[RMDB]
RNA sequence: GGGAACGACUCGAGUAGAGUCGAAAAAUAUGCAGCCAUCCAUUUUUUUCCCCAAAUAUUUUUGAUCCGCAGUUGGUUGAAUCCAUAGAGAGGGAAUCCAUGGAUACAGAGAAACUUUAGCUGCUCAGUAGUCUCAUUUGAUUGAUGAAAUAACUGACUUCAUGGUCAUAUUCGUAUGACCAUGAAGAAAAGAAACAACAACAACAAC
Reactivity to 2A3 in 0.01 (KOAc 150mM, MgCl2 10mM, bicine 150mM(pH8.5), 24C), signal-to-noise 1, nucleotides 027 to 156: a000u160a030u020g000c010a010g010c040c010a020u000c010c000a000u030u000u000u000u000u000u130c030c030c000c010a000a130a000u100a120u150u110u070u050u160g060a020u040c040c040g100c230a070g040u150u080g120g000u010u110g050a010a060u010c050c010a080u180a010g100a010g010a040g000g040g040a010a010u030c010c010a010u060g000g030a010u040a060c040a040g160a000g090a120a140a040c000u030u110u130a070g000c010u010g000c000u000c000a010g000u020a020g030u000c010u000c130a030u020u080u170g120a180u110u090g010a010u080g000a090a110a030u120a000a060c020u010g060a010